[RMDB]
RNA sequence: GGGAACGACUCGAGUAGAGUCGAAAAUGUCCAGUCCCUCCCCGUUCCUGGAGAAGGGAGACUCGGGAACGCCUAGCAUCUGAGGGACAAAGCCGCCCCCGGGCGCUCCCCUCGGAGAUCCACUGGGAACACUUAGCUUUCGAGCUAAGUAAAAGAAACAACAACAACAAC
Reactivity to DMS in 0.01 (KOAc 150mM, MgCl2 10mM, bicine 150mM(pH8.5), 24C), signal-to-noise 9, nucleotides 027 to 129: u050g010u030c020c020a070g010u020c000c010c000u000c000c020c020c010g000u000u000c010c000u000g050g010a050g020a130a090g010g010g010a070g000a090c030u010c030g000g000g000a040a040c110g010c020c020u000a030g030c160a110u010c020u020g020a040g010g020g020a060c070a070a070a050g000c050c050g000c040c010c020c100c170g000g010g020c020g000c050u000c060c020c000c000u010c020g020g000a030g000a080u030c050c050a100c030u020g000g010g010a100a090c160
Reactivity to 2A3 in 0.01 (KOAc 150mM, MgCl2 10mM, bicine 150mM(pH8.5), 24C), signal-to-noise 9, nucleotides 027 to 129: u120g040u010c000c000a000g030u010c000c000c000u010c000c000c000c010g010u010u010c000c000u060g150g030a060g020a100a100g080g040g020a070g030a020c010u010c010g010g000g010a020a010c020g010c010c020u040a030g030c030a090u020c020u040g010a030g000g000g010a020c030a020a070a000g040c070c040g020c010c010c000c020c020g040g010g000c020g010c010u020c010c000c000c000u000c000g020g010a040g010a040u040c040c010a050c060u040g010g000g030a060a010c030